Source information: The data come from the RNA Mapping Database (RMDB), library RFMREP. This 177-nucleotide RNA was probed chemically with 2A3 and DMS. For 2A3, 4,727 sequencing reads were counted. Conditions: 150 mM KOAc, 10 mM MgCl2 and 150 mM bicine (pH 8.5), 24 C.
RNA sequence: GGGAACGACUCGAGUAGAGUCGAAAAGAACGAGCGACUAAACGGUUUGGAGGAUAACUGAUUUAGGGACUUUCUUUAUACCUCUAUAAAAUCGAAGUAAGGCGAUUGAGGGCGAAUGCUAGGGCAGCUAAUUAGGUACGUUCGCGUACCUAAUUAGAAAAGAAACAACAACAACAAC
Reactivity to 2A3 in 0.01 (KOAc 150mM, MgCl2 10mM, bicine 150mM(pH8.5), 24C), signal-to-noise 4, nucleotides 027 to 126: g030a040a020c120g010a020g040c020g050a030c020u040a000a060a000c010g010g080u030u050u090g160g030a150g080g030a070u070a080a010c020u020g090a230u070u010u080a040g000g000g030a010c010u060u080u010c010u000u110u030a110u060a090c010c000u000c010u040a120u120a180a160a010a050u060c010g010a040a020g080u080a030a020g190g000c020g020a040u020u060g030a040g020g020g020c020g040a080a020u080g030c020u030a020g000g050g000c000a020g030
Reactivity to DMS in 0.01 (KOAc 150mM, MgCl2 10mM, bicine 150mM(pH8.5), 24C), signal-to-noise 7, nucleotides 027 to 126: g010a040a060c200g000a030g020c030g010a300c030u000a020a030a050c030g010g010u000u000u000g010g020a140g020g020a090u000a040a030c030u000g000a110u000u000u000a020g010g010g000a200c040u000u000u000c010u000u010u000a100u000a140c040c010u000c090u020a100u010a080a050a050a050u000c040g010a060a070g000u010a100a100g010g010c020g010a050u000u000g010a050g010g010g010c070g000a050a050u000g010c050u000a070g010g000g020c080a070g000